[RMDB]
RNA sequence: GGGAACGACUCGAGUAGAGUCGAAAACCGGAACUCCUUGCAUGUUAGGGACGAAGCCGCCCCCGGGCGCUCCCCUCUGUCCACCUUCGAGGGGGUUCACACCUCCAGGCGGCGGGCCGGCUACUCUGUAACAACCGCUUCGGCGGUUGUAAAAGAAACAACAACAACAAC
Reactivity to DMS in 0.01 (KOAc 150mM, MgCl2 10mM, bicine 150mM(pH8.5), 24C), signal-to-noise 3, nucleotides 027 to 129: c000c000g030g010a070a070c070u010c080c060u060u030g050c130a050u070g000u050u040a030g000g000g000a030c100g020a150a150g000c030c010g040c080c000c010c050c060g000g040g020c110g020c130u030c080c020c010c020u050c080u000g040u040c040c050a090c070c030u000u000c070g030a090g010g000g000g000g110u040u020c000a070c180a160c040c020u030c150c100a030g000g030c010g010g020c040g030g030g030c170c030g020g030c080u100a090c050u020c060u020g000u050a080
Reactivity to 2A3 in 0.01 (KOAc 150mM, MgCl2 10mM, bicine 150mM(pH8.5), 24C), signal-to-noise 2, nucleotides 027 to 129: c000c000g020g030a060a070c000u050c000c000u030u060g070c020a140u130g000u150u110a040g000g030g000a000c000g100a080a000g010c000c000g000c020c030c010c040c010g020g010g030c090g000c030u140c000c000c000c000u000c010u050g090u020c060c040a140c010c010u060u150c070g020a030g000g010g000g000g000u050u090c020a030c000a010c040c010u030c030c020a010g090g000c000g000g000c000g000g000g030c070c000g020g000c010u030a030c000u030c020u010g030u100a010